[RMDB]
RNA sequence: GGGAACGACUCGAGUAGAGUCGAAAAUCAGAUGAGACUAGUCAUCAGACUAGAUAGUAUCACACUACGGGUACAUAGUAGAGACAUACAUAGAUGUGUAUGACACAUCAGAGGCGCGGGCCACCGAGGCCUAGUAUGGGUUCGCCCAUACUAGGCCAAAAGAAACAACAACAACAAC
Reactivity to DMS in 0.01 (KOAc 150mM, MgCl2 10mM, bicine 150mM(pH8.5), 24C), signal-to-noise 1, nucleotides 027 to 126: u010c060a170g000a050u000g000a090g000a170c030u000a000g020u000c040a120u010c300a070g000a030c040u000a010g010a110u000a110g000u020a100u000c060a070c120a100c080u000a060c000g000g000g010u000a010c040a090u000a120g000u000a020g010a090g020a080c080a040u000a030c110a030u000a090g000a060u000g050u000g040u010a050u020g010a200c040a030c020a000u010c060a120g000a080g010g000c070g010c070g030g010g000c040c020a070c100c030g000a100
Reactivity to 2A3 in 0.01 (KOAc 150mM, MgCl2 10mM, bicine 150mM(pH8.5), 24C), signal-to-noise 1, nucleotides 027 to 126: u100c000a000g130a150u060g040a100g030a040c040u010a000g010u020c000a090u110c090a190g020a010c000u000a010g000a000u080a020g000u010a030u080c020a000c020a040c150u110a060c080g140g040g010u040a050c030a060u090a010g060u030a030g010a010g020a090c000a080u100a000c020a060u080a120g050a090u060g090u040g000u040a160u300g050a000c000a000c000a030u030c000a000g080a080g030g080c070g000c030g050g030g030c030c000a000c050c050g020a020
The record gives the reactivity of an RNA of 177 nucleotides to DMS and 2A3. The reactions ran in a buffer of 150 mM KOAc, 10 mM MgCl2 and 150 mM bicine (pH 8.5), at 24 C. Reactivities are given for positions 27 through 126. Reactivities are rounded to 0.1 and cut off at 0 and 3. For DMS, 839 sequencing reads were counted. The 2A3 profile rests on 902 reads.